[RMDB]
RNA sequence: GGGAACGACUCGAGUAGAGUCGAAAAUCUUUGCUUACUCACCACAGCUUACACUUGUGUUUCCGGAAGUGAAGAUGAUACUUUUAUUAUACACAUGUUUAGGUUUCAUGUGUACUUGCUAUUUUGGACACUCCUUUGAGUUCGCUCAAAGGAGUGUAAAAGAAACAACAACAACAAC
Reactivity to 2A3 in 0.01 (KOAc 150mM, MgCl2 10mM, bicine 150mM(pH8.5), 24C), signal-to-noise 1, nucleotides 027 to 126: u000c010u070u020u010g000c010u010u020a120c010u020c060a020c040c000a030c020a030g000c000u170u080a040c030a000c100u080u110g000u030g030u040u140u010c040c000g020g000a000a000g000u010g000a000a000g010a010u010g040a050u090a130c000u100u100u130u130a160u210u100a030u040a040c010a000c000a010u010g030u020u020u140a150g130g100u040u060u050c000a000u000g010u000g000u020a080c010u000u060g080c030u040a040u140u120u070u080g090g040
Reactivity to DMS in 0.01 (KOAc 150mM, MgCl2 10mM, bicine 150mM(pH8.5), 24C), signal-to-noise 2, nucleotides 027 to 126: u000c010u000u000u000g020c010u010u000a140c000u000c060a090c300c010a030c040a040g000c030u000u000a120c280a090c120u020u000g020u000g000u000u010u000c100c140g000g000a010a050g020u000g010a030a020g010a010u000g000a140u000a100c100u000u000u000u010a120u010u000a170u030a030c000a000c010a000u000g010u010u000u000a110g020g000u010u020u000c000a010u000g010u000g000u000a020c250u000u000g000c120u000a100u000u000u000u010g010g000